Source information:
Conditions: 150 mM KOAc, 10 mM MgCl2 and 150 mM bicine (pH 8.5), 24 C. The record gives the reactivity of an RNA of 177 nucleotides to DMS.
RNA sequence: GGGAACGACUCGAGUAGAGUCGAAAAGGUGUGAGGAAGCCACUGGACACAGCUGUGGCGCGACCCCUGGAUCUGAGCACAGCCCCUCCGGUGCAGACAGAUGGGGUCAGAGCCCCCUGCGGAGGCCCCUUGGUCCACUAUUCGUAGUGGACCAAGGAAAAGAAACAACAACAACAAC
Reactivity to DMS in 0.01 (KOAc 150mM, MgCl2 10mM, bicine 150mM(pH8.5), 24C), signal-to-noise 1, nucleotides 027 to 126: g010g010u000g040u000g020a060g000g020a070a160g020c050c030a020c020u000g010g010a170c090a060c110a080g010c040u000g020u010g010g020c070g030c150g000a020c000c000c000c010u000g000g020a070u000c010u010g000a140g000c030a010c020a060g000c090c020c020c050u000c020c030g000g020u010g000c000a090g000a200c050a020g000a050u000g000g000g010g000u000c010a030g030a190g010c020c000c060c020c020u000g000c080g010g000a080g020g000c080c150
For DMS the reverse transcriptase was MarathonRT. Values are in units of 0.01, from 0 to 300, in steps of 10. Source: RMDB library OK2TRN, as collected in RNAgym.